[RMDB]
RNA sequence: GGGAACGACUCGAGUAGAGUCGAAAAGCACCGCCGCAGUGCAGCCAACCACCAACCGCACACACGCUGCCCGAGCCUGCUACUGUCGCAGUCGUACCCGGUCCGGGGCCGGACCCGGGUAGGCGUAACUAAUACCACCAUUCGUGGUGGUAUUAGUAAAAGAAACAACAACAACAAC
Reactivity to 2A3 in 0.01 (KOAc 150mM, MgCl2 10mM, bicine 150mM(pH8.5), 24C), signal-to-noise 5, nucleotides 027 to 126: g030c010a020c050c020g070c040c020g020c040a030g020u040g050c010a010g060c020c030a030a030c020c010a030c010c020a070a030c030c030g020c020a010c000a000c000a000c100g030c020u030g000c010c010c000g030a030g020c020c010u040g040c010u050a070c040u150g090u150c040g020c080a030g010u030c020g120u030a030c000c010c000g000g010u030c020c010g030g020g240g100c130c030g000g030a050c080c190c010g000g000g000u010a020g000g030c010g020u020a040
Reactivity to DMS in 0.01 (KOAc 150mM, MgCl2 10mM, bicine 150mM(pH8.5), 24C), signal-to-noise 7, nucleotides 027 to 126: g000c050a080c040c040g020c050c030g010c040a090g010u000g020c050a100g000c060c050a090a120c070c030a070c050c050a080a080c060c030g010c050a060c070a080c090a070c070g010c040u000g010c030c020c020g000a100g000c060c020u000g000c030u010a060c060u000g010u000c080g020c090a060g010u000c040g000u000a030c010c000c010g010g000u000c000c010g010g000g030g030c150c040g010g000a040c060c020c030g010g000g020u000a010g010g000c040g010u000a090

Chemical mapping of a 177-nucleotide RNA with 2A3 and DMS. Reactivities are given for positions 27 through 126. Conditions: 150 mM KOAc, 10 mM MgCl2 and 150 mM bicine (pH 8.5), 24 C. The data come from the RNA Mapping Database (RMDB), library OK2TRN. The 2A3 profile rests on 10,300 reads. Reactivities are rounded to 0.1 and cut off at 0 and 3.